[RMDB]
RNA sequence: GGGAACGACUCGAGUAGAGUCGAAAAACCAAAGCGAGGGGCGUGUCUGUUUGCCCGUGCGGAGGGAAACGGCGCAAGCCGAAAUAACCGACUAGACUCGUAGAAAUUCGCGUGAAUGGGCUUUCGGACAGGAGUUCGAUUCUCCUCAUCUCCACCACAAUUACGUCGUGUUCGCACGACGUAAUUGAAAAGAAACAACAACAACAAC
Reactivity to DMS in 0.01 (KOAc 150mM, MgCl2 10mM, bicine 150mM(pH8.5), 24C), signal-to-noise 1, nucleotides 027 to 156: a110c090c000a040a140a070g010c090g000a040g010g030g020g030c040g030u000g040u000c050u000g000u000u000u000g030c000c000c000g020u030g060c120g030g030a300g010g020g000a060a160a100c030g030g000c000g050c260a070a190g070c020c000g000a010a070a140u000a110a280c120c020g000a070c050u010a120g020a070c010u020c040g020u010a110g020a090a100a210u000u000c030g010c000g060u000g060a190a080u000g000g010g010c030u000u010u000c010g070g010a070c030a090g000g000a060g000u000u000c160g000a300u010u000c000u000c020c000u010c040a160u000c000u000c050c010a030c040c030a220
Reactivity to 2A3 in 0.01 (KOAc 150mM, MgCl2 10mM, bicine 150mM(pH8.5), 24C), signal-to-noise 2, nucleotides 027 to 156: a020c010c000a070a020a000g100c030g040a060g010g030g020g000c070g060u060g020u030c030u030g050u070u090u120g010c000c000c000g000u030g000c030g000g020a040g050g010g020a000a130a020c000g000g000c010g040c100a040a030g010c000c000g020a080a070a000u050a030a020c020c000g020a020c010u050a060g060a120c040u020c050g050u050a010g130a050a150a090u110u070c050g000c030g050u050g080a150a090u110g000g000g000c000u060u020u020c010g020g020a000c010a030g040g030a090g050u060u090c030g020a000u120u040c040u010c000c040u000c010a050u020c020u000c020c010a080c030c020a050